[RMDB]
RNA sequence: GGGAACGACUCGAGUAGAGUCGAAAAUAUCGACCUCGAAUGAGGUCGAGAGUCGUGCAUAUAAGAGGCUCGACAGAUGCACGACAAAGCGAGCCUACAGGCGUCGAGGAAAACUCGACGCCAAAAACGUCUUCGAGCAGUUCGCUGCUUGAAGACGAAAAGAAACAACAACAACAAC
Reactivity to 2A3 in 0.01 (KOAc 150mM, MgCl2 10mM, bicine 150mM(pH8.5), 24C), signal-to-noise 2, nucleotides 027 to 126: u160a020u000c000g010a000c010c000u020c010g250a240a230u300g000a010g000g000u000c000g000a000g000a000g000u010c000g000u000g000c030a010u110a000u010a060a080g030a040g050g030c020u000c010g010a030c020a070g110a000u030g000c010a000c000g000a000c010a020a020a000g050c010g000a000g000c000c000u010a030c020a020g000g000c000g000u000c000g020a010g000g040a040a090a050a070c000u000c000g000a000c000g000c000c000a000a000a000a000a000
Reactivity to DMS in 0.01 (KOAc 150mM, MgCl2 10mM, bicine 150mM(pH8.5), 24C), signal-to-noise 2, nucleotides 027 to 126: u030a110u020c000g010a000c010c000u000c000g000a160a080u050g000a000g030g000u000c000g000a000g000a100g030u000c000g030u000g010c000a010u000a160u030a120a140g030a130g000g010c000u000c000g020a220c140a180g000a000u000g000c000a000c000g000a020c010a030a080a120g020c000g020a020g000c000c000u040a080c200a080g000g010c000g020u000c010g020a020g000g000a020a030a090a160c010u000c010g020a000c000g000c000c000a000a000a020a070a080